[RMDB]
RNA sequence: GGGAACGACUCGAGUAGAGUCGAAAAAAUCCUGAUCAGGCAGCCACUACUGCGGACCUUCAUCCCUGAUUAUUUGGUUGAUGAAAUUGGCGGGUGAAUCUGGCGGGAAAUUAUCUUGGAACGACCCUCCUAACCUUUUAUUCGUAAAAGGUUAGGAAAAAGAAACAACAACAACAAC
Reactivity to DMS in 0.01 (KOAc 150mM, MgCl2 10mM, bicine 150mM(pH8.5), 24C), signal-to-noise 4, nucleotides 027 to 126: a120a060u010c000c000u000g000a130u010c040a030g000g020c190a110g020c120c040a050c070u000a090c070u000g020c040g000g000a100c250c060u000u000c020a040u010c020c060c010u000g000a100u010u000a130u010u010u000g020g020u000u020g000a050u000g000a030a040a100u000u000g000g020c070g000g000g020u000g010a060a090u010c040u000g000g010c030g000g000g010a030a060a090u010u000a040u000c040u000u000g010g030a080a100c090g010a140c040c030c080
Reactivity to 2A3 in 0.01 (KOAc 150mM, MgCl2 10mM, bicine 150mM(pH8.5), 24C), signal-to-noise 3, nucleotides 027 to 126: a000a000u040c040c000u050g030a270u050c030a010g110g010c020a030g060c040c010a040c050u260a110c030u190g060c010g070g040a050c000c000u030u020c000a000u020c010c010c020u040g060a120u060u300a110u110u230u110g060g000u040u240g020a020u010g000a030a070a090u060u040g120g000c010g010g020g010u010g010a000a050u040c000u010g040g000c040g000g000g000a000a080a010u130u080a060u060c030u060u110g130g030a070a050c020g110a050c000c000c010